An RNA of 177 nucleotides, treated with DMS and read out base by base.
RNA sequence: GGGAACGACUCGAGUAGAGUCGAAAACGCGCUCGCGCCACGGCUGAAGGCUGACGAACGGGCAGCCCGCGUUGUUGUACGAAUAGACCGCGAUGCCCGUGCGCACGACGAACUGCUUGAACAUGCAGACCAGGUCACCAUUCGUGGUGACCUGGUCAAAAGAAACAACAACAACAAC
Reactivity to DMS in 0.01 (KOAc 150mM, MgCl2 10mM, bicine 150mM(pH8.5), 24C), signal-to-noise 1, nucleotides 027 to 126: c210g000c050g030c150u000c010g060c180g030c030c000a070c030g000g000c170u000g010a270a150g050g000c020u000g000a120c000g030a150a060c180g060g000g000c000a000g000c040c120c030g000c080g040u000u000g000u000u000g020u000a290c300g010a190a070u000a180g010a000c010c000g030c000g010a090u030g000c120c000c020g000u000g000c060g010c000a030c020g010a060c020g000a100a120c110u000g010c020u010u030g020a180a090c120a110u010g000c100a170
Reactivities are given for positions 27 through 126. Source: RMDB library OK2TST, as collected in RNAgym. The DMS profile rests on 512 reads. The reactions ran in a buffer of 150 mM KOAc, 10 mM MgCl2 and 150 mM bicine (pH 8.5), at 24 C. Reactivities are rounded to 0.1 and cut off at 0 and 3.